[RMDB]
RNA sequence: GGGAACGACUCGAGUAGAGUCGAAAAGGCGCUGGGGAUGUACACGGGUUUGCCCCCGUAUCUGUGUAUUAUCUCUUGUUAUAGCGCUGGGAUAGGUGGAGUGGGGGCGGUCUGCGCUUGGCGGGUGGUGUAUUUAUUUUUUCGAAAAUAAAUACACAAAAGAAACAACAACAACAAC
Reactivity to 2A3 in 0.01 (KOAc 150mM, MgCl2 10mM, bicine 150mM(pH8.5), 24C), signal-to-noise 2, nucleotides 027 to 126: g020g000c000g000c030u060g000g010g000g000a000u000g000u010a000c000a000c020g020g000g000u020u050u170g090c000c010c000c000c010g010u030a020u030c000u000g000u000g010u020a020u180u150a040u050c010u000c000u020u040g000u000u160a200u140a080g000c000g000c000u010g000g000g020a110u120a140g000g070u150g030g060a130g030u260g030g000g000g000g030c020g000g000u000c140u220g000c080g000c020u090u180g030g000c000g010g040g000u160g070
The record gives the reactivity of an RNA of 177 nucleotides to 2A3. The data come from the RNA Mapping Database (RMDB), library OK1LIB. The 2A3 profile rests on 2,579 reads.